[RMDB]
RNA sequence: GGGAACGACUCGAGUAGAGUCGAAAAGCCUCCUCGCUUCCAUAGAAGGGGGACGGGGCAGAUCGCAAGUGCUACAACCGAGCGGUGGUAUCUGUCAAACUAAGCAGCCACUGCACAUCAAUUGACUAAACGAUGCCGAUCUUCGGAUCGGCAUCAAGUUUAAGAUAACCUUCGGGUUAUCUUAAACAAAAGAAACAACAACAACAAC
Reactivity to DMS in 0.01 (KOAc 150mM, MgCl2 10mM, bicine 150mM(pH8.5), 24C), signal-to-noise 1, nucleotides 027 to 156: g000c010c000u000c000c000u020c010g000c030u000u000c020c110a130u010a170g040a070a140g000g000g010g030g020a020c000g030g020g030g000c120a040g020a050u010c010g000c070a100a060g030u000g010c050u000a150c080a060a300c080c030g000a180g000c010g010g000u000g000g040u000a030u010c030u010g010u010c030a040a090a280c070u000a100a050g000c010a080g000c020c040a030c010u020g000c000a120c080a110u000c050a110a100u000u010g000a180c080u010a100a070a170c160g010a000u000g010c000c000g040a000u000c010u010u010c300g060g010a000u000c020g020g040c000a000u010c000a000a050
Reactivity to 2A3 in 0.01 (KOAc 150mM, MgCl2 10mM, bicine 150mM(pH8.5), 24C), signal-to-noise 2, nucleotides 027 to 156: g000c000c020u040c030c010u010c030g190c020u060u030c040c050a230u080a190g050a040a100g040g000g000g000g000a010c070g000g000g000g040c020a010g000a020u000c000g000c040a030a000g010u010g000c000u060a140c050a080a050c080c040g090a030g030c010g000g000u000g010g000u000a000u000c000u000g050u040c030a000a000a080c060u090a000a070g000c010a000g000c010c000a030c000u000g060c000a030c020a040u210c100a050a270u180u220g060a160c030u200a090a080a030c070g010a000u000g010c000c000g000a000u000c000u020u020c150g080g000a010u000c020g000g040c000a000u000c010a000a000